[RMDB]
RNA sequence: GGGAACGACUCGAGUAGAGUCGAAAAAGGUCUCCAUGGAGGAAACAUUUGAGUCAGCGUGUCAUAGCCAUGUUUGGACUUACUACUGUUUGAUGACGUGGCGAUGGGUAGGAUGGUAGUAGCAGCGAGCUAAAAAUGGUUUCGACCAUUUUUAGCUAAAAGAAACAACAACAACAAC
Reactivity to 2A3 in 0.01 (KOAc 150mM, MgCl2 10mM, bicine 150mM(pH8.5), 24C), signal-to-noise 3, nucleotides 027 to 126: a000g030g020u010c020u000c030c010a030u100g040g020a060g050g040a050a070a020c020a060u070u090u100g030a040g050u050c040a020g010c030g060u030g040u060c030a090u070a050g000c010c000a000u010g110u050u030u110g070g010a020c000u030u050a040c020u060a030c030u030g080u070u050u080g170a120u120g010a020c030g010u030g010g000c010g030a050u070g030g000g020u030a020g010g030a050u030g020g020u020a050g020u020a020g040c030a010g050c010g080
Reactivity to DMS in 0.01 (KOAc 150mM, MgCl2 10mM, bicine 150mM(pH8.5), 24C), signal-to-noise 6, nucleotides 027 to 126: a070g010g010u000c030u000c070c030a090u000g010g010a140g010g000a100a070a080c060a080u000u000u000g000a080g010u000c030a070g010c050g020u010g000u000c040a080u010a130g010c060c010a010u000g010u000u010u010g010g010a070c040u010u010a070c150u000a080c160u010g020u000u000u010g000a100u010g000a040c030g030u000g000g000c030g010a060u000g010g000g020u000a050g000g010a060u000g010g010u000a040g010u000a040g010c080a060g010c120g000
Source information: The data come from the RNA Mapping Database (RMDB), library OK2TST. Structure probing data (2A3 and DMS) for a 177-nucleotide construct. The RNA was probed in 150 mM KOAc, 10 mM MgCl2 and 150 mM bicine (pH 8.5) at 24 C. For DMS, 11,187 sequencing reads were counted. DMS adducts were read by reverse transcription with MarathonRT.